An RNA of 177 nucleotides, treated with DMS and read out base by base. For DMS the reverse transcriptase was MarathonRT. The DMS profile rests on 900 reads. It was measured as part of the RMDB library TTRINS.
RNA sequence: GGGAACGACUCGAGUAGAGUCGAAAAGAUAUGGAGGUAAUAGAGUCGAUGUGCGACGAAGUGACGUAACAUCUGAUCGGAAACGAUCAGUGGUCACAGAGCAUAAGACUCUAUUACCUCCUAAGUCCGUGAACAUAAGCUUCGGCUUAUGUUCACGAAAAGAAACAACAACAACAAC
Reactivity to DMS in 0.01 (KOAc 150mM, MgCl2 10mM, bicine 150mM(pH8.5), 24C), signal-to-noise 1, nucleotides 027 to 126: g000a100u000a300u020g040g000a000g000g020u000a000a000u000a030g000a000g000u000c000g000a260u030g040u010g010c000g000a230c290g000a080a170g000u000g010a010c010g040u020a020a130c250a100u010c000u010g000a000u000c010g000g000a210a080a160c020g030a030u000c010a000g020u000g030g000u000c020a000c010a060g000a250g030c010a010u000a110a180g000a000c000u000c000u000a000u000u000a000c000c000u000c000c000u000a010a020g010u000c000